[RMDB]
RNA sequence: GGGAACGACUCGAGUAGAGUCGAAAACUAGUGUCGCCCAGGAAUGGCUUGGGACCCCACUCUCUGCGGGGUCCGCGUUCCAUCCUUUCUUACCUGAUGGCCGGCAUGGUCCCAGCCUCCUCGCUGGCUAAUUUUAACGGUUCGCCGUUAAAAUUAGAAAAGAAACAACAACAACAAC
Reactivity to 2A3 in 0.01 (KOAc 150mM, MgCl2 10mM, bicine 150mM(pH8.5), 24C), signal-to-noise 1, nucleotides 027 to 126: c040u030a090g110u000g000u030c010g030c030c000c010a000g030g030a090a050u040g030g010c070u040u120g160g030g000a000c000c000c000c000a030c010u190c000u070c110u200g070c080g000g000g000g000u000c000c000g000c010g030u050u030c000c000a040u100c030c000u130u220u090c070u210u160a130c020c010u090g120a220u120g140g030c110c030g030g000c000a030u050g050g000u020c000c000c000a000g020c000c010u030c010c020u050c020g030c050u020g040g010
Reactivity to DMS in 0.01 (KOAc 150mM, MgCl2 10mM, bicine 150mM(pH8.5), 24C), signal-to-noise 3, nucleotides 027 to 126: c030u010a090g030u020g030u000c020g010c040c010c030a040g010g010a150a040u000g000g010c140u000u010g020g010g010a020c010c000c010c010a060c050u010c300u010c160u000g000c100g020g000g010g000u010c000c000g020c060g000u000u000c030c010a060u000c060c060u010u010u000c100u020u000a100c070c030u010g000a140u000g010g020c060c030g030g000c020a030u010g000g020u010c090c000c010a070g010c010c030u010c030c030u010c110g020c040u000g010g010